An RNA of 207 nucleotides, treated with 2A3 and DMS and read out base by base. Source: RMDB library RNAMAK, as collected in RNAgym.
[RMDB]
RNA sequence: GGGAACGACUCGAGUAGAGUCGAAAAUCAUUCAGUUCGCUGAAUGAAAAAAAGCGUACUACACGAGGAUCACUUGGACCAUAGGAACUACUCCCAAAUAGGAGCCUAUGCUAGUGACCUCGUGUAUCGCAAAAACGUCGAGCUUCGGCUCGACGAAGUGUAAUUGAUUGUUCGCAAUCAAUUACACAAAAGAAACAACAACAACAAC
Reactivity to 2A3 in 0.01 (KOAc 150mM, MgCl2 10mM, bicine 150mM(pH8.5), 24C), signal-to-noise 5, nucleotides 027 to 156: u030c000a000u010u000c000a000g050u040u130c180g080c130u000g010a010a010u050g010a190a030a000a000a000a000a010g060c050g030u100a080c060u000a000c040a000c000g000a010g010g050a300u010c000a000c030u090u160g070g070a090c070c010a010u000a000g020g020a040a030c050u130a090c010u300c050c030c040a220a300a070u230a160g000g000a010g000c000c010u000a000u020g010c010u010a010g010u000g010a000c000c000u000c000g010u000g000u000a030u010c000g000c000a060a040a020a000a060c020g000u000c000g000a010g000c000u070u220c290g120g010c000u010c000g000a000c000g000a050a010
Reactivity to DMS in 0.01 (KOAc 150mM, MgCl2 10mM, bicine 150mM(pH8.5), 24C), signal-to-noise 2, nucleotides 027 to 156: u000c000a010u000u000c000a050g030u000u010c300g060c040u000g070a000a000u020g030a010a010a090a050a060a100a200g000c010g020u010a070c070u000a000c010a010c000g010a040g040g000a200u000c010a020c000u000u000g050g000a100c300c020a060u000a030g020g000a130a120c050u010a270c030u000c000c000c020a020a140a220u000a070g010g000a060g020c030c030u010a010u000g010c000u000a010g020u000g010a080c010c000u000c010g020u000g000u000a000u000c010g000c010a020a020a070a080a060c040g000u000c000g000a020g010c030u000u000c300g040g010c020u000c010g030a010c000g000a010a040